[RMDB]
RNA sequence: GGGAACGACUCGAGUAGAGUCGAAAAGAUAUGGAUACGUGAUAGACAUGCUUAACGCUCGGAAACGAGCGUUGAGCAACAGCUAUUCACGUAUCCUAAGUCAAACCUCAAUGUUCGCAUUGAGGAACAACUAGUUUCAGUUCGCUGAAACUAGUUGAAAAGAAACAACAACAACAAC
Reactivity to DMS in 0.01 (KOAc 150mM, MgCl2 10mM, bicine 150mM(pH8.5), 24C), signal-to-noise 6, nucleotides 027 to 126: g000a040u000a300u000g000g020a000u000a000c000g020u000g010a030u000a010g010a080c120a300u010g000c000u000u000a000a000c010g010c000u000c000g020g010a110a110a180c010g010a010g010c000g020u000u000g000a000g000c000a020a030c300a150g010c010u010a020u010u000c000a010c000g010u000a000u000c000c010u000a010a060g010u000c030a130a110a190c000c010u000c000a000a000u000g010u000u020c280g020c000a010u000u000g000a010g010g010a060a130
Reactivity to 2A3 in 0.01 (KOAc 150mM, MgCl2 10mM, bicine 150mM(pH8.5), 24C), signal-to-noise 5, nucleotides 027 to 126: g030a010u050a020u140g010g010a000u010a020c010g000u010g000a010u010a020g080a070c120a210u260g010c000u000u010a010a000c000g000c000u010c000g040g030a050a090a040c010g000a000g000c010g000u000u010g010a000g020c000a010a000c000a010g040c010u020a020u170u210c010a000c000g000u000a000u000c000c000u000a010a000g010u000c020a060a060a240c000c000u000c000a000a010u040g030u080u130c300g000c170a000u010u010g000a000g000g020a010a040